[RMDB]
RNA sequence: GGGAACGACUCGAGUAGAGUCGAAAAGAAAUUACGUUUCCUUUGCACUUCUCAAACCGGGAUCAAGAGAAGCAAAGCAUCCCUCAUAUCCACGAUGGAGGGUGUCGUGGAGUAUACUGUACCAAAAAGAGCGAACACGGCUUCGGCCGUGUUCGAACAAGCACGUAGAGUUCGCUCUACGUGCUUGAAAAGAAACAACAACAACAAC
Reactivity to 2A3 in 0.01 (KOAc 150mM, MgCl2 10mM, bicine 150mM(pH8.5), 24C), signal-to-noise 2, nucleotides 027 to 156: g010a010a070a020u200u160a050c090g020u050u040u010c000c000u010u040u030g080c110a150c070u040u020c040u040c030a170a230a060c030c170g050g040g060a080u080c110a090a000g000a000g010a000a000g000c000a000a000a000g010c020a070u050c000c010c010u060c080a100u110a070u040c000c010a010c030g000a010u040g180g050a080g070g000g030u090g000u010c030g000u000g000g000a010g000u030a010u000a020c160u120g140u140a100c050c110a090a110a030a010a010g090a020g120c000g010a000a000c000a000c000g000g000c020u040u050c210g040g000c000c000g020u000g000u000u000c000g000a000a010
Record summary: Conditions: 150 mM KOAc, 10 mM MgCl2 and 150 mM bicine (pH 8.5), 24 C. Structure probing data (2A3) for a 207-nucleotide construct. Source: RMDB library M2RFPK, as collected in RNAgym. For 2A3, 650 sequencing reads were counted.